The record gives the reactivity of an RNA of 177 nucleotides to 2A3 and DMS.
Reactivities are given for positions 27 through 126.
The DMS profile rests on 13,257 reads.
The reactions ran in a buffer of 150 mM KOAc, 10 mM MgCl2 and 150 mM bicine (pH 8.5), at 24 C.
The 2A3 profile rests on 9,806 reads.
RNA sequence: GGGAACGACUCGAGUAGAGUCGAAAACAUGCGCGUCCGAAGUAUGGGAAGCAUAAGUGGUCACACCGCCUUCCGCUCUUAUCAUUGUAUCUCGAAUACUAAAUCUGUGCUUUGAGCCUAGGCGCGGUCUACUGUUGCUGUUCGCGGCGACGGUAGAAAAAGAAACAACAACAACAAC
Reactivity to 2A3 in 0.01 (KOAc 150mM, MgCl2 10mM, bicine 150mM(pH8.5), 24C), signal-to-noise 4, nucleotides 027 to 126: c030a010u070g010c020g000c000g040u010c010c010g040a040a000g010u060a040u120g020g010g030a020a010g000c010a030u030a130a010g030u030g020g050u130c010a020c000a010c070c000g010c010c000u020u000c010c010g000c010u010c010u020u050a030u020c020a030u020u050g010u050a040u000c050u030c110g160a300a040u070a160c000u050a000a050a140u000c040u050g000u010g000c000u000u000u000g020a010g000c000c010u010a010g000g000c000g000c010g000g000
Reactivity to DMS in 0.01 (KOAc 150mM, MgCl2 10mM, bicine 150mM(pH8.5), 24C), signal-to-noise 2, nucleotides 027 to 126: c080a050u010g010c020g000c030g000u020c010c010g000a080a090g020u020a060u010g010g020g000a040a040g020c050a060u020a060a070g020u000g010g000u000c120a100c050a140c060c040g000c040c020u000u000c030c110g000c010u020c030u020u000a030u010c050a070u010u010g000u000a020u000c030u030c300g000a300a110u000a130c190u000a150a220a200u050c270u000g000u000g000c000u000u000u000g000a070g010c020c050u010a090g000g010c020g000c050g000g010